Description: This 177-nucleotide RNA was probed chemically with 2A3 and DMS. Conditions: 150 mM KOAc, 10 mM MgCl2 and 150 mM bicine (pH 8.5), 24 C. For DMS, 11,493 sequencing reads were counted. For DMS the reverse transcriptase was MarathonRT. It was measured as part of the RMDB library RFMREP.
RNA sequence: GGGAACGACUCGAGUAGAGUCGAAAAGGAAAUUACGUGGUUUCGACCACGUAAUUUCCCGCUCUUAAAUACAUCCUAUGUUAAGGUUCAACGAAGACUUAAUAACGCCUUCGGGCGUUAUUAAGUCCAGUUGGUCUUUAUUCGUAAAGACCAACUGAAAAGAAACAACAACAACAAC
Reactivity to 2A3 in 0.01 (KOAc 150mM, MgCl2 10mM, bicine 150mM(pH8.5), 24C), signal-to-noise 2, nucleotides 027 to 126: g000g010a000a000a020u020u000a000c020g000u010g000g070u010u070u150c220g030a010c000c000a010c000g000u000a010a000u000u000u000c000c000c000g000c010u100c000u010u080a040a010a000u070a030c020a040u030c010c010u060a030u100g060u040u030a060a020g010g050u050u260c120a080a020c090g120a110a020g020a000c000u000u000a000a000u000a000a000c000g000c000c010u030u070c150g070g010g000c030g000u000u000a000u000u000a010a000g000u010c010
Reactivity to DMS in 0.01 (KOAc 150mM, MgCl2 10mM, bicine 150mM(pH8.5), 24C), signal-to-noise 7, nucleotides 027 to 126: g000g010a010a010a000u000u000a010c000g020u000g000g010u000u000u010c210g010a030c000c000a010c000g010u010a000a000u000u000u000c000c000c100g010c220u000c020u000u000a030a050a070u010a080c130a090u010c030c020u000a070u000g010u000u000a050a040g000g010u010u000c170a070a070c160g000a110a140g010a010c000u000u000a000a010u000a000a000c000g000c000c000u000u010c240g020g010g010c000g010u000u000a000u000u000a000a000g010u000c010